[RMDB]
RNA sequence: GGGAACGACUCGAGUAGAGUCGAAAAGAAACAUGGUUCGCCAUGUUUCAAAGAAGCUCAUAAUGACGCAAACAACGGCGUCGCCGUGAGCAAACCGCGAAAAAAGACUUAUCUUCGGAUAAGUCAAGUAAAACUAUAUCUUCGGAUAUAGUUUUACAAAAGAAACAACAACAACAAC
Reactivity to 2A3 in 0.01 (KOAc 150mM, MgCl2 10mM, bicine 150mM(pH8.5), 24C), signal-to-noise 3, nucleotides 027 to 126: g010a000a000a000c000a000u010g000g060u030u030c050g020c040c010a010u010g000u010u000u000c000a010a000a000g050a060a010g000c000u000c000a020u060a090a040u100g010a000c010g020c010a020a180a300c070a190a140c180g060g000c010g030u000c010g010c000c030g000u000g000a010g000c000a000a050a000c060c020g030c040g000a120a080a010a020a010a050g000a000c000u010u000a000u010c020u050u080c270g050g000a000u000a010a000g000u000c000a000a000
Reactivity to DMS in 0.01 (KOAc 150mM, MgCl2 10mM, bicine 150mM(pH8.5), 24C), signal-to-noise 4, nucleotides 027 to 126: g000a000a000a020c000a000u000g000g010u000u010c180g030c000c010a000u000g000u000u000u000c010a060a100a100g000a100a110g010c000u000c000a000u000a100a100u000g010a000c000g000c010a030a070a170c240a090a120c220g010g000c000g010u000c010g030c180c170g000u000g000a000g000c010a030a060a200c020c010g000c170g010a010a050a050a070a110a130g000a010c000u000u000a000u000c000u000u020c190g020g010a010u000a000a000g000u000c000a010a040
The data come from the RNA Mapping Database (RMDB), library M2PK50. An RNA of 177 nucleotides, treated with 2A3 and DMS and read out base by base. DMS adducts were read by reverse transcription with MarathonRT. High DMS reactivity at an A or C suggests that its Watson-Crick edge is free. 2A3 adducts were read by reverse transcription with SuperScript II with manganese.